This 177-nucleotide RNA was probed chemically with 2A3.
[RMDB]
RNA sequence: GGGAACGACUCGAGUAGAGUCGAAAAGGCCACGCUUAAAAUACCUCUUGAACGACGCAACAAGCGAAGCGGCAGAACCGAGAAGGCGCGUAUCUGGGAGAUUACCGACCGGACGGUCCGCACCUGGGCCCCAAUACGCAUUCGUGCGUAUUGGGGCAAAAGAAACAACAACAACAAC
Reactivity to 2A3 in 0.01 (KOAc 150mM, MgCl2 10mM, bicine 150mM(pH8.5), 24C), signal-to-noise 1, nucleotides 027 to 126: g050g010c000c020a030c000g050c000u000u110a080a000a070a000u120a140c000c020u040c070u040u070g080a260a040c010g020a030c050g000c040a010a250c010a220a040g000c010g030a140a000g060c020g030g000c050a030g190a100a010c020c050g080a080g080a080a050g030g000c010g000c100g090u050a000u060c000u040g120g020g020a080g000a120u100u060a020c000c060g100a030c000c000g040g030a010c020g000g000u000c000c030g000c000a000c030c000u030g000g010

Notes
For 2A3, 601 sequencing reads were counted.